This 177-nucleotide RNA was probed chemically with DMS and 2A3. The DMS profile rests on 984 reads. Conditions: 150 mM KOAc, 10 mM MgCl2 and 150 mM bicine (pH 8.5), 24 C. High 2A3 reactivity points to a flexible backbone, as in loops and unpaired stretches. 2A3 adducts were read by reverse transcription with SuperScript II with manganese. DMS adducts were read by reverse transcription with MarathonRT.
RNA sequence: GGGAACGACUCGAGUAGAGUCGAAAAAGCACAUCGCGCUCACCAAUCAGGUUAAAGUUUCCCCAGUAGGGCGUCUCACAGUCUGUAUUGCCCUCUUGUGGAGAAACAACUGUGGGAAAACUGUAAACCCUCAUAAAUCCUUCGGGAUUUAUGAGGGAAAAGAAACAACAACAACAAC
Reactivity to DMS in 0.01 (KOAc 150mM, MgCl2 10mM, bicine 150mM(pH8.5), 24C), signal-to-noise 2, nucleotides 027 to 126: a070g040c100a060c110a090u000c150g010c020g000c020u010c030a180c030c040a060a120u000c050a110g010g020u000u000a070a060a180g000u010u000u000c030c000c030c050a050g000u000a050g000g000g060c070g060u000c030u000c020a030c010a030g000u000c170u020g040u000a070u010u000g010c000c000c000u000c170u000u000g000u010g000g010a100g000a080a110a020c020a020a080c010u000g000u000g010g010g000a050a070a060a080c070u000g010u000a080a100a180
Reactivity to 2A3 in 0.01 (KOAc 150mM, MgCl2 10mM, bicine 150mM(pH8.5), 24C), signal-to-noise 1, nucleotides 027 to 126: a000g100c050a060c020a150u140c030g000c000g000c070u030c060a020c050c030a060a070u170c070a070g060g010u130u120a170a110a050g010u050u000u000c010c000c010c030a020g020u020a010g020g020g010c000g050u040c010u040c010a050c000a020g090u060c050u070g020u040a070u020u270g000c000c010c000u060c010u060u070g050u140g020g110a210g060a050a050a020c030a000a000c020u040g000u070g030g010g050a000a110a000a000c000u030g070u110a090a110a120